RNA sequence: GGGAACGACUCGAGUAGAGUCGAAAAGAUAUGGACGUUGAUGACCAACAUCACUCAAUACAAUUCUCCCUAUCGGAAACGAUAGAGGAGUUAUGUAUUGAGUGAUGUUGCAAGACGUCCUAAGUCAGACCAAGAUAACCUUCGGGUUAUCUUGGUCAAAAGAAACAACAACAACAAC
Reactivity to DMS in 0.01 (KOAc 150mM, MgCl2 10mM, bicine 150mM(pH8.5), 24C), signal-to-noise 2, nucleotides 027 to 126: g010a020u010a300u030g000g000a000c000g080u000u000g010a110u040g000a150c300c000a020a000c010a020u000c000a000c000u000c000a010a010u010a000c020a030a300u000u000c000u000c000c010c000u010a000u000c020g010g000a180a130a050c010g000a000u000a020g000a190g010g000a020g030u060u000a030u010g000u000a010u020u000g000a000g010u000g000a000u000g000u010u000g010c000a070a130g000a000c000g050u000c000c000u000a000a020g000u000c050a110